RNA sequence: GGGAACGACUCGAGUAGAGUCGAAAAUGUGUGCACGCUGCACUUUGAAUCCGCAUUGAGGGUGGUAACUUUCCAGUCGCGCAGAGACGUUGCACGACAACAUUGUGUGAGGAGAGUCACUCAUAUACAAAGAGGGAGGUUUCGACCUCCCUCUUUGAAAAGAAACAACAACAACAAC
Reactivity to DMS in 0.01 (KOAc 150mM, MgCl2 10mM, bicine 150mM(pH8.5), 24C), signal-to-noise 4, nucleotides 027 to 126: u040g000u000g000u010g030c020a070c120g010c080u040g000c020a020c000u000u010u030g000a150a070u010c000c020g020c080a170u030u000g020a110g030g000g050u010g010g010u020a070a070c020u000u000u000c010c000a140g020u020c010g000c010g020c010a010g010a150g020a120c220g030u010u010g000c020a090c080g010a080c030a060a070c120a120u020u030g020u010g040u000g020a100g010g000a030g020a020g000u020c030a010c030u010c020a050u000a100u030a160
Reactivity to 2A3 in 0.01 (KOAc 150mM, MgCl2 10mM, bicine 150mM(pH8.5), 24C), signal-to-noise 5, nucleotides 027 to 126: u150g060u000g010u020g030c040a040c270g120c120u120g010c030a010c000u030u030u080g080a040a040u020c020c000g030c170a060u070u150g080a150g000g000g030u030g030g040u100a060a050c000u020u000u000c010c000a140g150u090c040g000c000g000c030a020g020a020g060a300c140g030u020u040g040c070a080c300g100a170c030a040a020c010a010u050u040g040u010g000u000g010a010g000g020a030g000a010g010u020c020a020c020u000c000a050u090a000u020a160
Source information
Source: RMDB library OK1LIB, as collected in RNAgym. An RNA of 177 nucleotides, treated with DMS and 2A3 and read out base by base. For 2A3, 2,660 sequencing reads were counted. Conditions: 150 mM KOAc, 10 mM MgCl2 and 150 mM bicine (pH 8.5), 24 C. For DMS the reverse transcriptase was MarathonRT. 2A3 adducts were read by reverse transcription with SuperScript II with manganese.